[RMDB]
RNA sequence: GGGAACGACUCGAGUAGAGUCGAAAAGCAUCCGACAUGGUGCUGGGAUGCGAAUAUCAGCACAUUACUCCUCGAGAAAGCAUGGGAGGAGGAUCAUCCAUGCAAUGGCUUUUGCCUAUCGUACCAUAGAGUCGUCGGUACGUAAGAUGACGACCGAAUAUAUACUGGGCUUCGGCCCAGUAUAUAUAAAAGAAACAACAACAACAAC
Reactivity to DMS in 0.01 (KOAc 150mM, MgCl2 10mM, bicine 150mM(pH8.5), 24C), signal-to-noise 3, nucleotides 027 to 156: g040c030a080u000c010c020g010a050c070a300u010g010g000u010g070c030u000g010g030g010a070u000g000c110g000a210a130u000a120u000c020a060g000c020a060c020a130u010u000a120c030u000c030c000u010c030g010a170g020a100a110a150g020c070a040u000g010g030g040a070g010g030a090g010g020a080u000c040a090u010c040c020a050u010g010c050a140a110u000g020g020c030u010u000u010u000g000c030c060u000a130u000c000g010u010a070c010c000a140u010a090g010a090g000u000c040g010u000c050g010g010u020a050c080g000u000a060a060g010a090u010g020a040c030g000a090c040c020g000a150
Reactivity to 2A3 in 0.01 (KOAc 150mM, MgCl2 10mM, bicine 150mM(pH8.5), 24C), signal-to-noise 2, nucleotides 027 to 156: g030c010a050u020c010c040g040a050c080a060u170g070g000u000g030c030u010g040g010g010a050u090g060c060g030a060a010u120a030u100c020a020g040c010a010c000a020u020u100a070c000u010c000c000u000c010g020a050g070a090a090a040g020c010a010u030g010g020g000a030g040g000a040g000g020a030u100c000a010u010c010c000a000u010g000c010a030a120u110g020g000c050u120u150u280u300g020c020c000u050a080u110c020g010u010a040c000c000a050u030a040g050a020g020u010c010g010u010c020g020g050u070a070c020g040u070a070a070g060a090u120g010a010c020g000a000c010c010g020a030

Annotation
This 207-nucleotide RNA was probed chemically with DMS and 2A3. 2A3 adducts were read by reverse transcription with SuperScript II with manganese. The reactions ran in a buffer of 150 mM KOAc, 10 mM MgCl2 and 150 mM bicine (pH 8.5), at 24 C. The DMS profile rests on 5,599 reads.